[RMDB]
RNA sequence: GGGAACGACUCGAGUAGAGUCGAAAAAAAGGCGAACCUUCAGAGACUCUAAUGGAGUGGGCGCAAGCUUAAGGGAGAGUCCAAUCCACUGGGAAACCAGGUCCACAGCAGUAACGGGGUGAUGCUCGCCCCAGAGGACUGUGGAAGGCAACCACCACUAAUGUUAUACCUUCGGGUAUAACAUUAGAAAAGAAACAACAACAACAAC
Reactivity to 2A3 in 0.01 (KOAc 150mM, MgCl2 10mM, bicine 150mM(pH8.5), 24C), signal-to-noise 2, nucleotides 027 to 156: a000a000a000g010g000c030g020a000a030c040c020u030u050c080a030g070a020g030a300c030u050c030u150a090a160u180g050g000a080g070u050g020g000g010c070g060c070a070a040g020c040u120u130a130a110g030g020g000a130g000a020g040u040c010c000a000a060u020c020c030a060c020u030g000g000g030a060a080a060c020c010a020g000g040u020c000c010a020c000a000g060c000a020g080u110a140a020c070g000g010g000g020u000g000a100u190g020c060u040c050g000c000c000c010c000a010g040a000g020g050a040c020u010g030u000g010g000a030a020g030g030c030a030a010c010c050a010c020c000a020
Reactivity to DMS in 0.01 (KOAc 150mM, MgCl2 10mM, bicine 150mM(pH8.5), 24C), signal-to-noise 1, nucleotides 027 to 156: a000a050a030g000g090c010g010a090a110c040c000u000u000c030a150g000a220g000a150c020u000c040u010a110a040u010g000g020a080g040u000g040g010g050c000g010c040a060a220g030c010u000u000a070a140g000g060g000a280g000a060g010u000c010c040a100a120u020c010c010a100c020u010g000g000g020a100a070a180c010c030a030g000g010u000c010c000a060c020a020g010c000a120g030u000a060a210c160g010g000g010g020u000g000a170u010g020c110u000c060g040c000c000c010c000a060g040a180g000g020a070c010u010g000u010g060g000a070a070g010g020c000a080a220c040c000a100c020c020a250

Conditions: 150 mM KOAc, 10 mM MgCl2 and 150 mM bicine (pH 8.5), 24 C. Chemical mapping of a 207-nucleotide RNA with 2A3 and DMS. For 2A3 the reverse transcriptase was SuperScript II with manganese. Values cover nucleotides 27 to 156. For DMS the reverse transcriptase was MarathonRT.